[RMDB]
About this RNA
Chemical mapping of a 177-nucleotide RNA with 2A3 and DMS. For 2A3 the reverse transcriptase was SuperScript II with manganese.

RNA sequence: GGGAACGACUCGAGUAGAGUCGAAAACGAUAUAUUUGCUUUUCUCAGUACCAAUACGGUUAGAAGCAAUCACUGGUACCAGAUUCGCGGCUGCAUGGCCUUGCUGAACACGAGUCCAGUGCGGCUGACCAACUUUGAAAUUCGUUUCAAAGUUGGUAAAAGAAACAACAACAACAAC
Reactivity to 2A3 in 0.01 (KOAc 150mM, MgCl2 10mM, bicine 150mM(pH8.5), 24C), signal-to-noise 5, nucleotides 027 to 126: c010g010a020u080a010u030a080u290u080u110g020c010u030u030u040u040c030u020c040a030g030u040a040c040c050a100a150u150a190c090g020g020u020u020a060g020a170a010g040c030a030a020u040c020a030c040u030g000g040u070a050c050c000a080g030a300u070u090c040g000c010g060g000c010u030g030c050a080u110g020g020c000c000u010u060g010c030u090g050a070a010c030a010c070g020a010g010u000c000c010a030g070u000g020c010g020g000c000u030g020
Reactivity to DMS in 0.01 (KOAc 150mM, MgCl2 10mM, bicine 150mM(pH8.5), 24C), signal-to-noise 6, nucleotides 027 to 126: c040g010a100u010a090u000a080u020u000u010g010c030u000u000u000u000c020u000c070a100g020u010a060c130c120a080a100u000a070c150g000g010u000u000a050g020a050a070g020c080a040a030u010c080a080c100u010g000g010u000a060c020c120a130g000a220u010u000c060g010c040g010g020c010u010g000c090a060u010g000g010c060c000u000u000g010c010u000g010a090a080c200a220c070g000a080g010u000c000c010a020g020u000g030c070g010g010c050u000g010